The data come from the RNA Mapping Database (RMDB), library OK2TST. An RNA of 177 nucleotides, treated with DMS and read out base by base.
RNA sequence: GGGAACGACUCGAGUAGAGUCGAAAAGACUGGAUAUUUGAUAUCAUCCAGGUAUCAAUUCUGUAUUGGUUUUUACGCUGCCCGCUCAAUGUUGGGCAGUGCAGUUCAGUGGGCGCGUUUUAUACAAAAUGGCGUGAUAGUUCGCUAUCACGCCAUUAAAAGAAACAACAACAACAAC
Reactivity to DMS in 0.01 (KOAc 150mM, MgCl2 10mM, bicine 150mM(pH8.5), 24C), signal-to-noise 1, nucleotides 027 to 126: g100a110c020u000g000g010a020u010a050u020u000u000g000a060u010a090u010c060a050u010c160c120a180g010g010u000a040u030c060a030a040u000u000c090u000g000u000a080u010u000g030g010u000u030u000u010u010a120c060g010c000u000g010c000c000c000g000c020u000c200a170a110u030g010u000u010g030g010g040c010a000g010u000g010c060a050g030u000u000c080a030g040u000g010g020g000c030g030c070g000u000u010u000u010a080u000a080c140a050a060